[RMDB]
RNA sequence: GGGAACGACUCGAGUAGAGUCGAAAAGACUGAUGAUGAUCCCGAUGGUGCUUGGCAGCAUGGGAAUGAAGCGAAUUGUGGUUCAGGUGGUGAAUCGCUUUGGUUAUCGUCGGGUACUGGUAGCGAAAUGACCGAUGGAUUUCGAUCCAUCGGUCAUAAAAGAAACAACAACAACAAC
Reactivity to DMS in 0.01 (KOAc 150mM, MgCl2 10mM, bicine 150mM(pH8.5), 24C), signal-to-noise 2, nucleotides 027 to 126: g000a140c030u010g000a040u000g010a050u010g000a100u000c000c000c010g040a070u000g020g000u000g000c010u010u000g030g010c020a020g000c020a040u010g050g010g010a110a100u010g010a060a030g010c030g010a070a130u000u000g020u000g000g030u000u000c090a070g020g010u000g020g030u000g020a070a060u000c050g020c050u000u000u010g020g010u000u000a030u000c030g040u000c030g020g000g010u000a070c070u010g010g010u000a040g020c090g000a060a100
Reactivity to 2A3 in 0.01 (KOAc 150mM, MgCl2 10mM, bicine 150mM(pH8.5), 24C), signal-to-noise 1, nucleotides 027 to 126: g060a020c030u060g000a040u030g000a020u030g010a020u070c070c000c020g000a030u070g000g220u000g030c110u140u160g100g090c020a050g000c010a020u020g070g000g020a110a160u130g070a070a050g040c060g020a020a050u150u100g040u130g070g010u040u020c020a010g070g110u070g050g040u070g070a020a060u070c000g020c000u020u020u020g040g020u040u000a040u050c020g020u000c020g100g000g000u010a030c070u070g060g000u060a010g050c030g050a070a100
Structure probing data (DMS and 2A3) for a 177-nucleotide construct. For 2A3, 1,048 sequencing reads were counted. For DMS the reverse transcriptase was MarathonRT. Values cover nucleotides 27 to 126. Source: RMDB library OK2TST, as collected in RNAgym. DMS (dimethyl sulfate) methylates the pairing face of unpaired adenines and cytosines. Conditions: 150 mM KOAc, 10 mM MgCl2 and 150 mM bicine (pH 8.5), 24 C.